[RMDB]
RNA sequence: GGGAACGACUCGAGUAGAGUCGAAAAGGCUGCGUAUCACUCUAGGGUACGUGAUAGUGCGAUAUAAGAAGCACUGGUACAUGCCGGCAGGGACAGUUAAGAGAUGGCCGCAGUCUCGUGUUCCUGCAAAAGGAGUUCUCGUUCGCGAGAACUCCAAUCCUACGUUGUACUUCGGUACAACGUAGGAAAAAGAAACAACAACAACAAC
Reactivity to 2A3 in 0.01 (KOAc 150mM, MgCl2 10mM, bicine 150mM(pH8.5), 24C), signal-to-noise 2, nucleotides 027 to 156: g020g020c010u040g000c000g000u010a050u070c020a080c200u100c110u190a080g100g000g000u030a040c060g010u050g040a020u120a040g000u000g000c000g020a020u040a000u040a300a060g120a090a010g010c000a000c030u020g000g030u120a120c090a050u120g020c010c000g020g010c050a030g000g070g000a010c010a040g070u080u120a160a000g040a000g010a020u030g100g080c060c130g000c100a020g020u000c010u000c050g000u020g000u000u000c000c000u040g010c030a010a010a000a010g000g000a000g010u000u000c010u020c000g010u080u070c170g000c000g030a010g000a000a000c000u000c000c010a000a000
Reactivity to DMS in 0.01 (KOAc 150mM, MgCl2 10mM, bicine 150mM(pH8.5), 24C), signal-to-noise 1, nucleotides 027 to 156: g060g020c000u000g000c010g000u000a050u000c030a110c080u000c040u020a060g020g010g030u000a000c000g010u020g000a090u000a010g060u000g010c010g000a100u020a190u020a120a270g000a230a300g010c000a010c020u000g090g010u020a120c040a150u000g020c010c020g010g010c020a030g020g000g000a030c000a060g010u020u010a170a150g000a070g010a050u000g000g020c120c130g030c060a150g000u000c000u000c020g060u000g000u010u000c000c020u000g030c040a020a020a110a100g000g010a030g030u000u000c000u000c030g060u010u000c180g020c030g000a020g020a040a000c000u020c000c000a030a160
Structure probing data (2A3 and DMS) for a 207-nucleotide construct. For DMS, 1,767 sequencing reads were counted. The RNA was probed in 150 mM KOAc, 10 mM MgCl2 and 150 mM bicine (pH 8.5) at 24 C.